[RMDB]
RNA sequence: GGGAACGACUCGAGUAGAGUCGAAAAGAUAUGGAUCCACAGCUAGGCUGUACCAUCGGAAACGAUGGGUAGGCCUUGGACCUGUGGAGUCCUAAGUCAAACAGCAGGAAGUUCGCUUCCUGCUGAAGAUUGUUCCUCUGUUCGCAGAGGAACAAUCAAAAGAAACAACAACAACAAC
Reactivity to DMS in 0.01 (KOAc 150mM, MgCl2 10mM, bicine 150mM(pH8.5), 24C), signal-to-noise 4, nucleotides 027 to 126: g010a030u000a130u000g000g000a300u000c000c000a010c000a000g000c020u000a010g040g000c000u000g000u030a300c000c000a000u000c000g020g000a050a040a060c000g010a000u000g000g010g000u010a300g000g020c000c010u010u000g000g010a050c300c000u000g000u000g000g000a030g000u000c000c000u000a010a100g000u010c030a090a100a300c020a000g000c010a010g010g000a010a000g020u000u030c240g000c010u000u000c000c010u000g000c000u000g000a020a050
Reactivity to 2A3 in 0.01 (KOAc 150mM, MgCl2 10mM, bicine 150mM(pH8.5), 24C), signal-to-noise 3, nucleotides 027 to 126: g020a000u070a030u070g000g000a010u040c010c000a010c000a010g010c010u030a010g050g040c040u100g270u300a280c000c010a000u010c010g000g010a020a030a040c000g000a010u010g030g000g020u040a050g010g020c000c000u030u050g000g020a000c010c030u010g000u000g000g010a000g010u050c000c000u040a070a010g040u000c050a060a120a200c000a030g020c010a000g020g010a020a010g030u040u150c180g080c130u010u000c000c000u000g000c000u020g010a010a010

Chemical mapping of a 177-nucleotide RNA with DMS and 2A3. Source: RMDB library TTRDEL, as collected in RNAgym. DMS adducts were read by reverse transcription with MarathonRT. The reactions ran in a buffer of 150 mM KOAc, 10 mM MgCl2 and 150 mM bicine (pH 8.5), at 24 C.